[RMDB]
RNA sequence: GGGAACGACUCGAGUAGAGUCGAAAACUCUUAUCGAGAGCGGCAGAAGGACUGGCCCGAUGAAGCCCGGCAACCUAACUUUAUUUAAGCGUAAAGUGAAGGUGCUAAUUCCAGCAAAAUGGUGUAUAAACGACCGUUAACUUCGGUUAACGGUCAACUAUCAGAACUAGUUCGCUAGUUCUGAUAGAAAAGAAACAACAACAACAAC
Reactivity to DMS in 0.01 (KOAc 150mM, MgCl2 10mM, bicine 150mM(pH8.5), 24C), signal-to-noise 3, nucleotides 027 to 156: c020u000c010u010u000a230u000c080g010a050g010a080g020c030g010g040c030a060g000a130a110g010g000a120c080u000g020g030c040c010c030g000a120u020g020a130a180g000c040c000c050g010g010c010a060a050c000c000u010a110a010c000u000u000u000a030u010u000u000a130a170g030c260g000u000a030a030a050g010u010g000a080a030g020g010u010g010c000u010a060a200u000u000c030c010a080g000c060a030a060a120a190u000g010g010u010g000u010a120u010a080a110a180c120g000a020c000c010g010u000u000a000a020c000u000u010c300g010g030u010u000a000a010c010g010g000u000c000a000a030
Reactivity to 2A3 in 0.01 (KOAc 150mM, MgCl2 10mM, bicine 150mM(pH8.5), 24C), signal-to-noise 4, nucleotides 027 to 156: c010u020c010u040u060a100u060c020g020a010g010a030g070c060g020g020c010a000g040a130a020g030g030a070c090u100g100g020c000c010c010g000a020u050g140a120a020g010c010c000c010g000g010c030a090a110c000c010u010a010a010c000u010u010u020a040u050u220u110a160a040g100c040g050u010a010a010a010g010u030g040a110a010g000g000u000g010c010u000a030a010u120u030c020c010a030g030c090a080a010a040a250u130g020g030u080g050u090a110u110a170a180a040c130g000a000c000c000g000u010u000a000a000c000u020u050c190g080g000u000u000a000a000c000g010g000u000c000a000a000
The record gives the reactivity of an RNA of 207 nucleotides to DMS and 2A3. For DMS the reverse transcriptase was MarathonRT. Values cover nucleotides 27 to 156. The RNA was probed in 150 mM KOAc, 10 mM MgCl2 and 150 mM bicine (pH 8.5) at 24 C.